This 177-nucleotide RNA was probed chemically with DMS and 2A3. In probing experiments dimethyl sulfate is read out at A N1 and C N3, which are open when not base-paired. Conditions: 150 mM KOAc, 10 mM MgCl2 and 150 mM bicine (pH 8.5), 24 C. It was measured as part of the RMDB library TTRDES.
[RMDB]
RNA sequence: GGGAACGACUCGAGUAGAGUCGAAAAGAUAUGGAAUGGCUGUGGAGCCAGUGUCGGAAACGACACAUGGCGUUGAAACAGCAUUCCUAAGUCAAAACCCACAACUAGUGUUCGCACUAGUUGUGGGCGAAAUUAACAGGUUCGCCUGUUAAUUUCGAAAAGAAACAACAACAACAAC
Reactivity to DMS in 0.01 (KOAc 150mM, MgCl2 10mM, bicine 150mM(pH8.5), 24C), signal-to-noise 8, nucleotides 027 to 126: g000a010u000a070u020g000g000a020a010u000g020g020c000u000g010u000g020g010a130g020c000c000a020g010u000g000u000c000g010g000a020a020a050c000g010a010c000a000c010a050u000g010g010c000g020u000u020g000a160a200a020c000a000g010c000a020u000u000c000c000u000a010a090g000u010c010a140a070a120a300c000c000c000a010c000a000a000c000u000a000g010u000g010u000u020c290g020c000a010c000u000a000g010u000u000g020u000g000g000g010
Reactivity to 2A3 in 0.01 (KOAc 150mM, MgCl2 10mM, bicine 150mM(pH8.5), 24C), signal-to-noise 7, nucleotides 027 to 126: g010a010u020a010u080g000g030a020a010u060g300g090c010u010g000u020g030g070a020g000c010c010a000g010u000g000u000c010g000g000a080a010a010c010g010a000c000a040c030a120u010g000g000c030g090u250u110g000a000a010a000c000a000g000c000a000u000u000c000c000u000a000a000g010u000c010a000a030a100a250c020c000c000a000c000a000a000c000u020a000g010u010g070u160u100c300g050c150a000c000u000a000g000u000u000g000u010g000g000g000